[RMDB]
RNA sequence: GGGAACGACUCGAGUAGAGUCGAAAACAACUGUUAUCUUGCCACUGCAUUGUUAACACUCCAACAAAUAGAGUUGAAGUUUAAUCCACCUGCUCUAUAAAGGGCUGGUGAAGCUGCUAACUUUUGUCUUUAACAAUCAGUUCGCUGAUUGUUAAAGAAAAGAAACAACAACAACAAC
Reactivity to 2A3 in 0.01 (KOAc 150mM, MgCl2 10mM, bicine 150mM(pH8.5), 24C), signal-to-noise 2, nucleotides 027 to 126: c010a000a000c050u050g000u070u020a050u080c020u040u030g080c020c000a090c100u140g000c030a010u010u040g050u040u050a050a060c000a030c040u040c010c010a020a070c010a020a150a050u180a070g030a000g050u030u050g050a050a010g000u020u080u160a030a030u030c010c000a020c000c000u010g040c010u000c000u050a180u140a300a210a130g020g000g000c000u010g030g000u040g000a010a000g000c020u040g040c010u010a030a030c030u000u030u100u140g090u010
Reactivity to DMS in 0.01 (KOAc 150mM, MgCl2 10mM, bicine 150mM(pH8.5), 24C), signal-to-noise 2, nucleotides 027 to 126: c020a120a040c160u010g000u000u000a050u010c030u000u000g020c020c150a080c140u000g000c100a070u000u000g010u000u000a040a030c100a070c040u010c020c020a020a040c070a070a120a110u010a170g010a090g000u000u010g010a040a030g000u000u010u010a060a100u000c100c020a020c020c010u000g020c010u000c000u010a100u000a100a170a100g010g000g000c030u020g000g000u010g000a060a070g000c030u000g000c080u010a040a060c040u000u000u000u000g000u000